[RMDB]
RNA sequence: GGGAACGACUCGAGUAGAGUCGAAAAGGAGGAAGGAUGUCCAAGCGGAGACGCCCUGAGGAAUCGCUCAUUAGAGUGUGACUUACAGAUUGUGUAAGUGUUUACAGCUACCGUAGACCACUCUUCAGAAACCUCAGGGGACAGUGACGGUAGCAUACGUAGUACAGUAAUUCGUUACUGUACUACGAAAAGAAACAACAACAACAAC
Reactivity to DMS in 0.01 (KOAc 150mM, MgCl2 10mM, bicine 150mM(pH8.5), 24C), signal-to-noise 2, nucleotides 027 to 156: g010g010a090g010g000a110a040g010g000a060u000g010u000c050c040a070a150g020c050g030g010a170g010a100c050g040c000c000c000u000g000a050g010g010a030a230u000c030g010c160u000c070a130u000u000a040g000a030g020u010g010u000g020a010c010u000u000a030c020a070g010a210u000u000g010u000g030u020a010a030g010u000g000u010u000u000a040c040a070g000c000u000a010c010c000g050u000a060g000a120c040c010a040c000u000c000u020u000c070a060g020a040a040a300c000c000u000c000a050g050g000g020g030a030c080a160g020u020g020a110c050g010g040u000a020g060c010a120u020a090
Reactivity to 2A3 in 0.01 (KOAc 150mM, MgCl2 10mM, bicine 150mM(pH8.5), 24C), signal-to-noise 2, nucleotides 027 to 156: g040g000a020g010g000a070a000g010g020a030u050g050u030c020c000a040a020g030c040g020g020a030g000a040c010g030c000c000c000u000g000a000g000g010a000a030u040c030g000c030u100c070a110u030u070a000g000a010g000u000g010u100g050a010c000u000u000a000c000a050g100a300u180u170g110u020g000u070a000a020g010u000g020u020u000u020a000c010a020g010c010u010a010c010c010g000u000a010g010a000c010c000a000c000u010c000u050u050c080a040g000a010a020a010c000c000u000c000a000g020g010g000g020a010c000a020g080u070g090a010c040g000g000u010a010g000c000a040u040a080
About this RNA:
Conditions: 150 mM KOAc, 10 mM MgCl2 and 150 mM bicine (pH 8.5), 24 C. Structure probing data (DMS and 2A3) for a 207-nucleotide construct.